[RMDB]
RNA sequence: GGGAACGACUCGAGUAGAGUCGAAAACAGAUUUCGAGAGGAAUUUGGUAUAUCAAAAGGUAUAAGACGCUCCAAGUACAGAUGGGUCGAAGUAAGACGGAGCGCAGGAUUGUUGAGUUAUACGGGAGUAUUCCAGCAAUGCUGAACCAUCGUACAAUAAUACAUAUUUAUUCGUAAAUAUGUAUUAAAAAGAAACAACAACAACAAC
Reactivity to 2A3 in 0.01 (KOAc 150mM, MgCl2 10mM, bicine 150mM(pH8.5), 24C), signal-to-noise 4, nucleotides 027 to 156: c000a010g040a030u030u050u050c050g020a040g010a060g050g030a030a020u030u020u040g030g060u090a100u020a030u220c070a080a080a080a070g120g020u170a140u060a170a070g100a040c000g000c000u000c000c010a140a050g020u000a020c010a040g010a000u010g000g000g000u010c010g030a080a050g130u130a090a030g020a000c000g000g010a000g000c010g000c000a000g010g040a010u000u000g010u010u020g020a120g090u140u050a010u000a020c000g070g010g020a150g020u000a010u010u030c000c000a000g010c000a000a000u090g140c000u010g010a010a020c000c000a000u000c010g000u000a000c010a020a040
Reactivity to DMS in 0.01 (KOAc 150mM, MgCl2 10mM, bicine 150mM(pH8.5), 24C), signal-to-noise 4, nucleotides 027 to 156: c020a070g000a060u000u010u010c020g020a300g020a300g040g000a030a020u000u000u000g010g010u000a100u010a070u000c060a080a080a060a140g010g010u010a070u010a060a140g010a140c020g010c020u000c020c010a090a150g020u000a090c050a100g010a070u000g020g000g020u010c030g010a070a140g020u000a050a120g020a040c060g010g000a040g090c030g010c020a040g010g000a040u010u000g020u010u010g000a130g010u000u000a020u000a050c040g040g030g000a280g040u000a030u000u020c030c020a040g000c020a030a030u000g000c020u000g000a050a050c010c010a040u000c050g010u000a060c040a100a210
This 207-nucleotide RNA was probed chemically with 2A3 and DMS. It was measured as part of the RMDB library OK3TST. For DMS the reverse transcriptase was MarathonRT.